[RMDB]
RNA sequence: GGGAACGACUCGAGUAGAGUCGAAAAUACGGUGGUUCGCGGGCGAUCGCGGCCGAUGUGCGGUUUAUCGAAGCUACCGGCGUGCGCACCGCACAGGUCUACGGAUUGAGCGAGACCGGUUGCACGGAAAUCAAACACGGUUCGCCGUGUUUGAUUUAAAAGAAACAACAACAACAAC
Reactivity to 2A3 in 0.01 (KOAc 150mM, MgCl2 10mM, bicine 150mM(pH8.5), 24C), signal-to-noise 5, nucleotides 027 to 126: u240a000c030g030g050u090g010g100u090u250c020g000c030g010g040g110c120g060a070u060c050g010c020g070g000c050c010g010a080u060g020u010g010c020g000g070u050u070u150a170u230c040g030a120a010g000c020u030a050c030c010g030g010c030g030u110g010c040g000c010a020c010c000g000c010a000c000a020g010g020u020c020u070a130c060g060g060a120u150u190g010a120g050c060g010a010g030a050c000c010g010g000u080u090g010c030a010c020g140g020
Reactivity to DMS in 0.01 (KOAc 150mM, MgCl2 10mM, bicine 150mM(pH8.5), 24C), signal-to-noise 4, nucleotides 027 to 126: u040a090c000g000g030u000g000g010u020u030c080g040c020g020g030g000c150g000a060u010c020g030c070g000g000c070c100g010a020u010g010u010g000c050g030g000u000u020u010a160u060c090g000a100a160g030c040u000a080c030c030g000g000c020g030u020g000c050g020c160a130c020c000g000c020a030c040a100g000g020u010c010u000a080c040g020g000a180u020u040g010a130g030c030g000a070g000a070c040c000g000g000u010u000g010c020a140c140g020g010
This 177-nucleotide RNA was probed chemically with 2A3 and DMS. DMS adducts were read by reverse transcription with MarathonRT. Values cover nucleotides 27 to 126. 2A3 adducts were read by reverse transcription with SuperScript II with manganese. It was measured as part of the RMDB library OK1LIB. High DMS reactivity at an A or C suggests that its Watson-Crick edge is free.